[RMDB]
Description:
Chemical mapping of a 177-nucleotide RNA with DMS. The RNA was probed in 150 mM KOAc, 10 mM MgCl2 and 150 mM bicine (pH 8.5) at 24 C. Source: RMDB library RFMREP, as collected in RNAgym. For DMS the reverse transcriptase was MarathonRT.

RNA sequence: GGGAACGACUCGAGUAGAGUCGAAAAUUUCUUUAACAGUCUGUAACCCUGGAAACGAAUUAUUCGGAGAUAGGGUUUAAUGAUUGGUAGAGCGUCACACCUCUGUGGCGUCUAGUGUGUCCUUGACCAAGAACAAAUGCUUCGGCAUUUGUUCUUGAAAAGAAACAACAACAACAAC
Reactivity to DMS in 0.01 (KOAc 150mM, MgCl2 10mM, bicine 150mM(pH8.5), 24C), signal-to-noise 1, nucleotides 027 to 126: u000u020u010c000u000u000u000a070a080c010a000g010u000c000u000g000u000a000a000c010c000c000u000g000g000a300a140a020c010g000a050a220u020u010a140u010u000c000g000g000a020g000a300u010a000g000g010g000u000u000u000a060a020u010g000a000u000u000g000g000u000a060g000a050g020c020g010u000c000a000c010a050c180c160u000c190u000g010u000g000g000c010g010u000c040u000a070g020u010g010u000g010u000c040c040u000u010g000a100c210